This 177-nucleotide RNA was probed chemically with DMS and 2A3. Conditions: 150 mM KOAc, 10 mM MgCl2 and 150 mM bicine (pH 8.5), 24 C. For DMS the reverse transcriptase was MarathonRT. Source: RMDB library OK1LIB, as collected in RNAgym.
RNA sequence: GGGAACGACUCGAGUAGAGUCGAAAAAAUCGGCUAUGGCGAGGCGAUUUCGGGGCUCACGAACGGUUCGCAUUACGUGAUCGACACGUCGCGCAACGGCGCCGGACCCGCGCCCGACGCCCCGCUCACACAACCGCGAUUUCGAUCGCGGUUGUGUAAAAGAAACAACAACAACAAC
Reactivity to DMS in 0.01 (KOAc 150mM, MgCl2 10mM, bicine 150mM(pH8.5), 24C), signal-to-noise 1, nucleotides 027 to 126: a000a050u000c050g000g030c050u000a130u000g000g000c000g000a130g000g110c000g010a120u020u040u000c000g000g000g000g040c010u000c250a210c300g000a100a090c110g000g020u100u000c020g040c090a080u050u000a000c050g000u000g000a280u020c240g000a180c010a040c140g000u000c300g020c000g030c000a150a120c080g040g030c040g000c000c050g000g000a020c060c000c150g020c140g040c000c000c000g020a000c100g050c000c000c040c000g010c090u040c220
Reactivity to 2A3 in 0.01 (KOAc 150mM, MgCl2 10mM, bicine 150mM(pH8.5), 24C), signal-to-noise 2, nucleotides 027 to 126: a000a000u190c110g090g000c150u130a170u270g020g000c000g000a000g000g010c000g020a050u030u050u000c000g000g030g000g000c010u070c200a150c080g170a080a030c000g000g000u070u100c020g000c000a040u110u060a030c020g000u000g090a070u090c060g160a030c070a000c090g060u070c010g010c020g020c070a210a110c160g250g080c030g000c000c020g090g000a060c010c000c050g020c070g050c000c000c000g010a000c000g050c030c000c000c000g000c030u030c000